[RMDB]
RNA sequence: GGGAACGACUCGAGUAGAGUCGAAAAGUAUGCACGCUAUCAAAGAUCGUCCGAUGGCGGUGAAUGGUCAGGUUGAGAUCCUGCCGAUGAUGUACCUGGCGCUGUCCUACGAUCACCGUCUGAUCGAGGACCACACACUCUUCGGAGUGUGUGGUCCAAAAGAAACAACAACAACAAC
Reactivity to 2A3 in 0.01 (KOAc 150mM, MgCl2 10mM, bicine 150mM(pH8.5), 24C), signal-to-noise 2, nucleotides 027 to 126: g080u030a050u140g040c020a030c070g020c000u020a010u170c040a090a040a070g040a080u090c010g080u080c100c010g080a060u110g010g030c020g000g020u020g050a090a050u040g030g030u010c000a000g000g050u040u090g140a130g000a110u070c030c010u030g090c070c030g030a110u160g010a010u050g060u090a000c000c010u020g050g000c080g000c060u030g030u010c010c010u050a070c090g000a020u010c000a000c020c030g140u050c070u050g030a020u030c010g050a050
Reactivity to DMS in 0.01 (KOAc 150mM, MgCl2 10mM, bicine 150mM(pH8.5), 24C), signal-to-noise 1, nucleotides 027 to 126: g020u000a070u000g010c010a020c040g040c040u000a040u030c070a080a170a100g000a040u000c050g000u000c030c100g010a150u000g000g020c000g020g020u000g010a080a050u000g010g010u020c010a030g000g000u000u000g000a180g010a060u000c020c060u000g000c000c040g040a000u000g010a110u000g050u000a030c030c020u000g020g000c020g000c050u000g000u020c020c010u000a220c100g000a110u000c000a030c060c140g000u000c040u000g000a060u030c040g000a130